The data come from the RNA Mapping Database (RMDB), library TTRDEL. The record gives the reactivity of an RNA of 177 nucleotides to DMS and 2A3. The 2A3 profile rests on 1,792 reads. Reactivities are given for positions 27 through 126. The reactions ran in a buffer of 150 mM KOAc, 10 mM MgCl2 and 150 mM bicine (pH 8.5), at 24 C. The DMS profile rests on 1,446 reads.
RNA sequence: GGGAACGACUCGAGUAGAGUCGAAAAGAUAUGGACGCGACGAAGUACGCCUCGACGAAGUCGGAAACGACAGAGAGGGUACAGAGCGUCCUAAGUCAAAAGGAGAGUUCGUUCGCGAACUCUCCAACCUAUCGUGAGGGUUCGCCCUCACGAUAGGAAAAGAAACAACAACAACAAC
Reactivity to DMS in 0.01 (KOAc 150mM, MgCl2 10mM, bicine 150mM(pH8.5), 24C), signal-to-noise 2, nucleotides 027 to 126: g020a050u000a300u000g040g010a030c010g020c000g010a240c220g020a120a100g020u000a010c000g040c020c010u000c000g010a230c260g030a070a090g000u000c000g010g000a040a060a150c010g030a020c000a010g000a150g000a030g000g030g030u020a000c000a010g010a140g010c000g000u000c000c000u000a000a070g010u000c060a050a020a220a040g020g050a010g000a030g000u000u000c000g030u010u020c300g000c000g020a010a000c000u000c000u000c000c000a030a030
Reactivity to 2A3 in 0.01 (KOAc 150mM, MgCl2 10mM, bicine 150mM(pH8.5), 24C), signal-to-noise 2, nucleotides 027 to 126: g010a040u130a040u170g000g010a010c000g040c040g110a300c110g000a100a050g020u020a010c100g300c090c000u070c020g300a300c060g010a160a010g000u000c000g000g040a070a080a020c030g010a000c000a020g060a000g000a010g060g030g000u000a000c010a020g010a000g030c010g000u000c000c010u000a030a010g030u000c000a010a030a020a150g020g000a000g010a000g000u010u010c000g010u000u110c250g020c020g140a000a000c000u000c020u000c000c000a000a000